[RMDB]
An RNA of 207 nucleotides, treated with 2A3 and DMS and read out base by base. Source: RMDB library OK3TST, as collected in RNAgym. The reactions ran in a buffer of 150 mM KOAc, 10 mM MgCl2 and 150 mM bicine (pH 8.5), at 24 C. For 2A3 the reverse transcriptase was SuperScript II with manganese.
RNA sequence: GGGAACGACUCGAGUAGAGUCGAAAAAAAAUGAAGGAGUAGAUAAUUGUGAAUUUCUGUCAUUUUAGCAGCCUAGCCAAUCUCAUGAAUAUACUUCACUGAGCUUUAUCCAGCCACAUACUUCCCUUAUUUAAUUCCACAGUGUGGCAGAAAUGAAGCUUGAAUCAUUAUUCGUAAUGAUUCAAGCAAAAGAAACAACAACAACAAC
Reactivity to 2A3 in 0.01 (KOAc 150mM, MgCl2 10mM, bicine 150mM(pH8.5), 24C), signal-to-noise 2, nucleotides 027 to 156: a000a000a000a000u050g000a030a040g010g040a020g060u060a040g060a170u140a170a130u260u140g030u040g060a070a040u050u070u020c030u040g100u030c030a030u040u100u070u070a020g010c030a000g050c010c010u070a040g040c020c030a040a080u050c010u000c030a030u080g070a060a010u160a030u130a190c040u020u040c020a040c100u050g060a040g010c020u100u090u040a120u090c030c010a040g000c000c000a030c010a020u090a040c040u040u040c000c000c000u000u010a040u000u040u050a070a060u130u050c050c000a020c020a090g050u020g010u000g050g010c000a000g030a000a100a020u130g050a060a030
Reactivity to DMS in 0.01 (KOAc 150mM, MgCl2 10mM, bicine 150mM(pH8.5), 24C), signal-to-noise 2, nucleotides 027 to 156: a040a030a040a050u000g000a110a050g010g000a120g010u000a090g000a150u000a050a110u000u000g000u000g010a090a070u010u000u000c020u000g010u000c030a090u000u000u000u000a050g040c030a120g050c070c020u000a070g010c000c030a030a100u010c040u000c050a060u000g000a070a040u000a130u010a040c070u010u000c030a060c080u000g010a080g020c070u000u010u000a070u000c040c050a160g010c040c000a020c030a090u000a050c030u000u000c020c010c020u000u010a120u000u010u000a080a100u010u000c030c040a120c030a110g020u000g000u000g020g010c000a040g000a010a030a080u000g000a150a180